Source: RMDB library ARCHII, as collected in RNAgym.
Chemical mapping of a 207-nucleotide RNA with 2A3.
Values cover nucleotides 27 to 156.
High 2A3 reactivity points to a flexible backbone, as in loops and unpaired stretches.
The RNA was probed in 150 mM KOAc, 10 mM MgCl2 and 150 mM bicine (pH 8.5) at 24 C.
RNA sequence: GGGAACGACUCGAGUAGAGUCGAAAAAAGCAGCGUAGGGCAUACCGAGGGUCAGAGCACCUCGUAAAUCCAACUGAAAAACUUUAGUCGCAAACGACGAAAACUACGCCCUGGCCGCUUAAGGUCCAGGACUCACACUAGCCUGUUCAUGGGCUAGCUUCGUUUCAGAGUUCGCUCUGAAACGAAGAAAAGAAACAACAACAACAAC
Reactivity to 2A3 in 0.01 (KOAc 150mM, MgCl2 10mM, bicine 150mM(pH8.5), 24C), signal-to-noise 1, nucleotides 027 to 156: a030a000g000c010a020g000c000g050u090a060g000g000g030c000a030u070a040c020c040g000a040g030g000g000u050c020a000g000a020g120c060a000c000c000u010c010g060u040a050a050a000u060c040c000a020a030c100u060g000a110a000a000a080a120c010u080u110u170a030g050u010c110g010c130a100a270a150c080g060a000c000g020a050a120a020a070c040u040a050c060g060c030c000c000u000g000g000c010c000g080c020u110u080a130a080g010g000u100c010c000a000g000g080a000c000u040c000a030c000a050c050u000a000g000c010c030u160g160u300u180c090a110u160g000g050g000c000u000a000g040